[RMDB]
RNA sequence: GGGAACGACUCGAGUAGAGUCGAAAAUUGGACAGACGAACACAUCAAGCUGGAACGCAAAUUCAAGAAAGACACACGCAAACAGUCGAUCCAACAUGCUCGGUGGUCCAAGUUGAACUGCGACGAACGCGCGAAAGAGUCCUUCACCAAGGACGAACUUAUUGGGCCGGUUCGCCGGCCCAAUAAGAAAAGAAACAACAACAACAAC
Reactivity to 2A3 in 0.01 (KOAc 150mM, MgCl2 10mM, bicine 150mM(pH8.5), 24C), signal-to-noise 1, nucleotides 027 to 156: u000u020g020g010a010c000a030g190a030c000g110a010a010c010a000c030a200u050c110a070a030g020c020u040g000g020a030a070c040g000c060a120a080a010u200u170c040a130a030g070a060a080a000g050a190c070a020c050a040c130g120c150a130a220a060c070a030g010u010c000g020a040u070c010c110a150a090c020a110u070g000c030u050c080g020g070u100g020g020u070c000c040a000a100g030u070u040g070a000a110c080u100g000c040g000a030c060g040a170a040c100g030c000g000c010g130a020a010a010g060a030g000u000c000c000u000u030c020a040c060c040a000a000g000g000a020c000g000a030a000
Source information:
The data come from the RNA Mapping Database (RMDB), library OK3TST. Chemical mapping of a 207-nucleotide RNA with 2A3. The RNA was probed in 150 mM KOAc, 10 mM MgCl2 and 150 mM bicine (pH 8.5) at 24 C. For 2A3 the reverse transcriptase was SuperScript II with manganese.